[RMDB]
RNA sequence: GGGAACGACUCGAGUAGAGUCGAAAAGGUGACAAAAUGCAGUCACGCAAAAUGAAGGAAAGAAAAGAGAAACCAUGCACGUGAAAAGAAGCAGCGCUAUCGUGCAAUUCCAAGUAAUAGCGAGGCCCACGACUCGAGGAUUCGUCCUCGAGUCGUGAAAAGAAACAACAACAACAAC
Reactivity to 2A3 in 0.01 (KOAc 150mM, MgCl2 10mM, bicine 150mM(pH8.5), 24C), signal-to-noise 3, nucleotides 027 to 126: g090g000u000g010a000c040a120a120a110a140u300g040c190a030g020u000c000a000c010g030c080a110a130a000a030u290g100a080a030g080g080a040a030a090g110a000a190a060a000g230a090g020a000a090a000c060c040a030u150g010c000a020c020g050u160g110a020a150a050a020g120a080a000g000c030a050g110c040g000c000u080a000u150c000g000u000g000c010a000a050u050u010c000c030a040a010g000u030a080a100u060a040g000c060g000a010g040g010c000c000
Reactivity to DMS in 0.01 (KOAc 150mM, MgCl2 10mM, bicine 150mM(pH8.5), 24C), signal-to-noise 1, nucleotides 027 to 126: g010g040u000g000a000c010a020a020a100a170u080g000c300a140g000u010c000a000c000g000c060a020a000a110a020u110g000a050a000g000g040a090a000a130g000a060a010a050a110g000a160g020a110a100a170c040c060a070u020g030c060a010c000g060u000g000a010a110a060a150g000a080a020g000c010a000g010c020g000c020u000a000u000c020g000u010g020c000a030a210u000u010c000c000a000a060g010u110a000a000u000a000g000c050g020a010g010g050c030c190

This 177-nucleotide RNA was probed chemically with 2A3 and DMS. 2A3 adducts were read by reverse transcription with SuperScript II with manganese. For DMS the reverse transcriptase was MarathonRT. For 2A3, 1,096 sequencing reads were counted. The RNA was probed in 150 mM KOAc, 10 mM MgCl2 and 150 mM bicine (pH 8.5) at 24 C.